[RMDB]
The record gives the reactivity of an RNA of 177 nucleotides to 2A3 and DMS. For 2A3, 128,025 sequencing reads were counted.
RNA sequence: GGGAACGACUCGAGUAGAGUCGAAAAUAUCAGCGUACUAGCGUAUUGAUGUUAGAUGGAUAGCAAUGACUGUAGGCUAUCCAAUGUGUGCAUAACGCACAAUACGCUGAUCUACAGUCAUGCGUACGAUCAUCGUGUUUUUCGAAAUGUGAUGAUCAAAAGAAACAACAACAACAAC
Reactivity to 2A3 in 0.01 (KOAc 150mM, MgCl2 10mM, bicine 150mM(pH8.5), 24C), signal-to-noise 9, nucleotides 027 to 126: u300a000u000c000a000g000c000g000u000a000c000u000a000g000c010g060u060a130u090u280g250a110u140g000u000u000a010g000a040u010g000g000a000u000a000g000c000a010a030u060g000a000c000u000g000u000a000g000g000c000u000a000u000c000c000a000a000u010g000u000g000u010g000c070a070u060a240a040c040g000c000a000c000a000a010u000a000c000g000c000u000g000a000u000c000u000a000c000a000g000u000c010a030u140g090c050g090u130a070c090
Reactivity to DMS in 0.01 (KOAc 150mM, MgCl2 10mM, bicine 150mM(pH8.5), 24C), signal-to-noise 9, nucleotides 027 to 126: u070a020u000c010a000g000c000g010u000a060c010u010a010g010c000g030u020a180u040u040g010a090u020g010u000u000a010g000a230u000g010g000a010u000a000g000c000a050a030u010g010a010c000u010g010u000a020g000g000c000u000a000u000c000c000a010a010u010g010u010g020u000g010c110a180u060a110a220c190g010c000a000c000a030a070u000a000c000g010c000u000g000a000u000c050u000a000c010a010g010u000c000a110u050g010c180g020u030a100c180

Notes: Source: RMDB library OK1LIB, as collected in RNAgym. DMS adducts were read by reverse transcription with MarathonRT.